This 177-nucleotide RNA was probed chemically with DMS and 2A3.
Conditions: 150 mM KOAc, 10 mM MgCl2 and 150 mM bicine (pH 8.5), 24 C.
The DMS profile rests on 1,817 reads.
The data come from the RNA Mapping Database (RMDB), library RFM100.
RNA sequence: GGGAACGACUCGAGUAGAGUCGAAAAGAAAGAAAGAGUGGGGCCAGGCGGUGGUGGGCACUGCUGGGGUGGGCACAGCAGCCAUGCAGAGCGGGCAUUUGACCCCGUGCCACCCUUUUCCCCAGAAGAAGUGAUACGGGUUCGCCCGUAUCACUUCAAAAGAAACAACAACAACAAC
Reactivity to DMS in 0.01 (KOAc 150mM, MgCl2 10mM, bicine 150mM(pH8.5), 24C), signal-to-noise 2, nucleotides 027 to 126: g010a200a120a120g000a150a080a070g000a100g020u010g000g010g000g000c060c160a130g000g020c060g050g000u040g000g040u060g020g000g010c090a080c090u020g000c020u000g040g010g020g020u020g060g000g010c060a040c080a130g040c030a060g010c170c110a040u000g000c000a040g000a140g050c050g000g000g010c070a110u030u100u000g010a080c100c000c010c000g000u010g030c030c000a070c010c000c010u010u020u000u010c020c000c010c150a190g010a040a070
Reactivity to 2A3 in 0.01 (KOAc 150mM, MgCl2 10mM, bicine 150mM(pH8.5), 24C), signal-to-noise 2, nucleotides 027 to 126: g090a010a050a010g260a030a090a000g080a020g020u030g010g000g050g010c110c070a040g050g000c080g010g010u020g010g110u100g020g020g020c030a000c090u060g030c010u000g020g000g010g020u170g000g040g000c070a030c060a040g020c000a000g010c060c040a040u130g000c000a000g030a040g140c070g000g000g000c060a150u030u100u250g230a300c000c000c000c000g000u010g030c020c020a070c000c010c060u000u010u000u000c000c000c000c010a020g040a110a000